Description
Chemical mapping of a 177-nucleotide RNA with 2A3 and DMS.
RNA sequence: GGGAACGACUCGAGUAGAGUCGAAAAAGCUCCGGUACGCCGGAGCAAUCAUGACUGACACCUCUUGAGCGAGCCUUCGGGCAUUGAUCUUAACCAGUCCCUGAUUAGCCUGGCUACGGCCAGGCAAUUCGUAAGCAGGAUUCGUCCUGCUUACGAAAAAAGAAACAACAACAACAAC
Reactivity to 2A3 in 0.01 (KOAc 150mM, MgCl2 10mM, bicine 150mM(pH8.5), 24C), signal-to-noise 5, nucleotides 027 to 126: a010g010c010u000c000c010g000g000u070a060c290g050c010c000g010g000a000g020c000a000a000u020c020a020u030g080a010c020u020g020a030c010a050c080c010u030c010u060u050g050a050g040c020g010a020g010c000c000u050u050c060g040g020g040c030a090u060u130g030a050u030c040u080u080a050a060c050c010a030g030u050c020c000c010u030g050a130u060u170a030g000c000c000u000g000g000c010u040a060c200g050g000c000c000a000g000g000c000a000a010
Reactivity to DMS in 0.01 (KOAc 150mM, MgCl2 10mM, bicine 150mM(pH8.5), 24C), signal-to-noise 2, nucleotides 027 to 126: a120g010c000u000c000c000g000g030u010a090c260g030c000c000g030g000a000g000c010a010a000u000c090a060u040g000a090c060u000g010a170c110a080c170c040u010c000u020u010g020a050g000c050g010a080g000c050c010u000u030c080g020g030g020c130a020u010u000g000a050u010c170u020u050a030a140c170c030a070g000u030c000c000c050u000g040a080u010u020a100g020c020c010u000g000g000c000u010a050c190g040g000c000c000a000g010g020c010a000a000
The data come from the RNA Mapping Database (RMDB), libraries RFM100 and RFMREP. Conditions: 150 mM KOAc, 10 mM MgCl2 and 150 mM bicine (pH 8.5), 24 C. For 2A3 the reverse transcriptase was SuperScript II with manganese.